[RMDB]
RNA sequence: GGGAACGACUCGAGUAGAGUCGAAAAAGUGGCCACUUACUGAGUAUGAUUUUACUGAUUAUAAGGUACAACUCUUUGAGAAGUACUUUAAAUAUUGGGAUCAGACGUAUCACGCAAAUUGCGUUAAAGGGUAGCUCCUUCGGGAGCUACAAAAGAAACAACAACAACAAC
Reactivity to 2A3 in 0.01 (KOAc 150mM, MgCl2 10mM, bicine 150mM(pH8.5), 24C), signal-to-noise 4, nucleotides 027 to 129: a000g030u000g030g020c010c010a040c050u060u050a020c020u080g000a010g010u070a060u050g040a050u000u030u010u140a040c000u010g000a000u000u020a000u010a050a000g010g000u000a000c000a010a080c020u000c000u110u170u300g010a010g010a000a000g000u000a000c000u010u000u000a010a040a000u240a030u030u020g010g010g010a010u000c000a010g020a030c060g040u010a020u240c040a010c020g030c030a070a150a300u300u160g000c000g010u010u010a070a080a000g140g020
Reactivity to DMS in 0.01 (KOAc 150mM, MgCl2 10mM, bicine 150mM(pH8.5), 24C), signal-to-noise 4, nucleotides 027 to 129: a000g030u000g030g000c000c050a000c050u020u070a090c090u020g010a080g030u040a020u060g020a050u000u060u090u060a080c030u010g040a060u080u000a290u000a030a050g050g020u000a010c030a060a290c040u000c000u050u040u130g010a020g000a090a300g030u020a060c030u000u000u000a000a030a090u060a060u050u020g060g000g000a010u020c000a030g020a000c210g050u030a000u100c210a040c030g000c000a060a100a140u070u090g010c150g040u040u000a090a000a080g050g020